[RMDB]
RNA sequence: GGGAACGACUCGAGUAGAGUCGAAAAGACAGUCUUCGCUAUACUCUUUAUCAUCCUCGGUGCGGCUGUGAUUCGAUGGGUGAAAACCUUCAUUGAUCAGCAGAGGGAGCACUCUCAAGAGAGAGAACAAUACAUUAUGGAGAUGCACAAGAAGCAAGUACCCAACGCUAUUCGUAGCGUUGGGUACAAAAGAAACAACAACAACAAC
Reactivity to 2A3 in 0.01 (KOAc 150mM, MgCl2 10mM, bicine 150mM(pH8.5), 24C), signal-to-noise 2, nucleotides 027 to 156: g040a010c050a030g010u030c060u030u120c210g030c000u080a080u130a130c020u060c020u100u160u140a060u010c030a040u030c000c030u000c090g020g060u110g000c050g000g000c000u030g020u050g060a010u120u000c050g000a070u140g000g000g000u010g040a000a000a000a080c000c000u060u090c030a050u030u050g010a000u060c030a000g000c010a010g010a050g090g050g000a010g000c020a030c000u000c030u040c090a240a020g100a000g000a000g000a000g040a190a030c050a060a060u120a050c030a090u200u160a070u300g020g000a030g010a000u060g050c040a040c010a060a040g010a010a000g020c040a160a030

Annotation:
Structure probing data (2A3) for a 207-nucleotide construct.